[RMDB]
RNA sequence: GGGAACGACUCGAGUAGAGUCGAAAAAGAUCCACGCUACGGCGUGGAUCACGCGUUCAUCCCUAUUGGGACGGAAGUAGGCAUAGUGCCGAAGGAACGCAUUAGUCAUGCGCUACGGCGCAUGACACACAUCAGAGUCACUUCGGUGACUCUGAAAUCUCAAAAACAGGUUCGCCUGUUUUUGAGAAAAAGAAACAACAACAACAAC
Reactivity to 2A3 in 0.01 (KOAc 150mM, MgCl2 10mM, bicine 150mM(pH8.5), 24C), signal-to-noise 3, nucleotides 027 to 156: a000g010a000u000c010c010a010c000g040c000u010a030c200g090g000c010g000u000g000g000a000u000c000a000c000g000c000g000u000u000c010a030u060c030c000c000u140a300u250u300g010g000g010a010c030g110g060a070a060g000u000a000g020g000c020a050u140a260g180u230g180c000c000g010a000a000g070g000a000a010c010g000c030a010u050u150a010g000u000c000a000u020g000c000g010c010u020a050c280g100g000c010g020c000a000u000g000a000c000a000c000a000c010a110u030c000a000g000a000g010u010c010a010c010u010u050c080g110g000u000g000a000c000u000c000u000g000a000a000a010
Reactivity to DMS in 0.01 (KOAc 150mM, MgCl2 10mM, bicine 150mM(pH8.5), 24C), signal-to-noise 1, nucleotides 027 to 156: a080g010a050u000c000c000a000c000g080c010u000a080c270g100g050c010g040u000g010g010a000u000c000a120c050g030c040g040u000u010c010a300u000c000c010c010u000a220u010u000g030g040g020a070c040g010g000a090a100g000u000a130g010g020c000a170u000a160g010u000g010c000c010g000a180a130g020g030a020a090c060g010c020a110u000u000a030g050u000c050a030u000g000c050g050c000u000a120c250g040g000c000g030c000a010u000g000a070c010a060c120a040c100a100u000c040a020g000a060g010u000c000a050c010u000u000c290g050g010u000g010a010c000u000c000u020g000a000a020a080
Source: RMDB library M2RFPK, as collected in RNAgym.
An RNA of 207 nucleotides, treated with 2A3 and DMS and read out base by base.
Values cover nucleotides 27 to 156.